Conditions: 150 mM KOAc, 10 mM MgCl2 and 150 mM bicine (pH 8.5), 24 C. Structure probing data (2A3) for a 207-nucleotide construct.
[RMDB]
RNA sequence: GGGAACGACUCGAGUAGAGUCGAAAAGGGGUCUUCCACGACAGAGGUAGAGACAUGAUCUGAAGCCUCCACGGAUCAACAGCUCUACUCCCCACCUGUCGUUGGAAGACGGAGGCACCCAAAUCAUCAAAUAUCGUUUCGACGAUAUUUGAUGAAAACCACGUCUCUAGUUCGCUAGAGACGUGGUAAAAGAAACAACAACAACAAC
Reactivity to 2A3 in 0.01 (KOAc 150mM, MgCl2 10mM, bicine 150mM(pH8.5), 24C), signal-to-noise 2, nucleotides 027 to 156: g060g010g020g000u010c020u000u000c000c000a000c010g010a000c000a000g030a010g020g030u000a000g000a020g000a040c140a270u300g020a050u000c000u010g020a080a000g040c000c000u070c000c000a010c000g000g000a010u050c040a150a090c030a120g040c000u010c000u020a000c000u070c080c040c010c010a020c030c000u000g000u000c010g010u090u150g000g010a000a000g000a000c020g000g000a000g010g010c020a040c000c000c020a020a080a080u020c000a000u000c000a000a000a000u010a000u000c000g010u020u150u080c270g140a030c000g000a000u000a000u000u010u000g010a000u010g000a020a000a000
It was measured as part of the RMDB library RNAMAK.